The record gives the reactivity of an RNA of 207 nucleotides to DMS.
[RMDB]
RNA sequence: GGGAACGACUCGAGUAGAGUCGAAAAUAUUCCAUAGGAACGGACGUUAUCUUUUGUAAGAUAACAGCAGGUGCAGGUCCUGAAAUCGUGUGGUGGCGUGAACUUUAGGCGAAGAAAAGGAGAGUAAACAUAACUAUUUCGUUCUUUUGAACUCGUCCAGACGUGAUUAGUUCGCUAAUCACGUCUGAAAAGAAACAACAACAACAAC
Reactivity to DMS in 0.01 (KOAc 150mM, MgCl2 10mM, bicine 150mM(pH8.5), 24C), signal-to-noise 1, nucleotides 027 to 156: u010a120u000u010c030c020a230u000a040g010g030a120a070c030g040g020a120c080g000u000u000a010u010c010u000u030u000u020g010u000a080a080g030a070u010a020a020c010a200g040c020a100g020g000u000g000c030a120g010g020u000c010c060u000g000a050a080a080u000c020g030u010g150u000g010g020u000g000g010c040g080u010g000a010a040c150u000u010u000a120g000g020c040g010a050a090g020a120a030a110a090g040g040a120g020a080g040u010a060a090a070c130a110u000a110a080c090u000a120u000u010u000c020g000u010u000c040u000u000u000u000g010a080a060c080u000c030g020u020c040

DMS (dimethyl sulfate) methylates the pairing face of unpaired adenines and cytosines. It was measured as part of the RMDB library VIROID. For DMS the reverse transcriptase was MarathonRT.